Source: RMDB library OK1LIB, as collected in RNAgym. Structure probing data (2A3) for a 177-nucleotide construct. The RNA was probed in 150 mM KOAc, 10 mM MgCl2 and 150 mM bicine (pH 8.5) at 24 C. For 2A3 the reverse transcriptase was SuperScript II with manganese.
RNA sequence: GGGAACGACUCGAGUAGAGUCGAAAAUUCGACAGCCCAUACAGCAGCCGUGCUGCUGUCCCCAUUGUCCAAGGCACAAACAAGCGACGAUCAUGGACGUACAGGCCCAUGUACCGAAAGCCCAGAAGCAGGCGCACUAAUUCGUUAGUGCGCCUGCAAAAGAAACAACAACAACAAC
Reactivity to 2A3 in 0.01 (KOAc 150mM, MgCl2 10mM, bicine 150mM(pH8.5), 24C), signal-to-noise 1, nucleotides 027 to 126: u000u040c050g000a020c100a130g010c000c000c000a050u170a040c000a000g000c020a000g100c000c210g300u300g060c000u000g000c040u000g000u030c000c110c000c000a100u040u060g040u030c000c000a040a000g020g050c000a000c010a170a110a000c000a000a000g000c000g060a040c000g000a080u020c010a080u040g010g020a000c000g010u110a120c000a120g030g020c000c000c000a000u010g010u000a040c000c000g010a000a030a070g110c010c000c000a010g000a000a000